[RMDB]
RNA sequence: GGGAACGACUCGAGUAGAGUCGAAAAUAAAAGCGGCAACCAACGCAGCAGAGGGAUGCAACCCAAGAAGCGGAAGGAGACGCAACUCCAAACCACGAAAGAGGAGCGAAAGCAAGCCGCAAAAAAAGUCUAUAACACUGUUCGCAGUGUUAUAGACAAAAGAAACAACAACAACAAC
Reactivity to 2A3 in 0.01 (KOAc 150mM, MgCl2 10mM, bicine 150mM(pH8.5), 24C), signal-to-noise 1, nucleotides 027 to 126: u090a000a040a020a000g000c000g010g030c020a030a060c010c000a050a000c030g000c010a020g100c000a010g040a090g070g000g000a060u150g120c010a120a150c020c000c000a020a040g080a050a000g040c020g020g040a110a070g070g000a050g020a010c030g000c050a010a040c020u010c000c000a110a110a070c040c010a050c110g090a190a050a060g060a020g020g000a000g000c000g070a100a000a020g000c000a060a000g000c000c000g000c000a010a000a000a000a000a000a110
Reactivity to DMS in 0.01 (KOAc 150mM, MgCl2 10mM, bicine 150mM(pH8.5), 24C), signal-to-noise 1, nucleotides 027 to 126: u000a020a020a160a230g000c020g000g020c050a120a150c060c040a000a260c070g000c000a000g000c170a120g000a130g040g000g000a110u030g000c240a240a090c000c020c040a000a020g030a140a120g000c000g010g010a130a220g000g000a140g010a120c090g000c190a070a170c000u020c000c040a020a090a120c110c040a020c130g050a030a120a050g000a130g040g000a220g000c000g000a080a080a200g000c070a110a140g000c010c000g030c030a010a000a000a110a010a060a020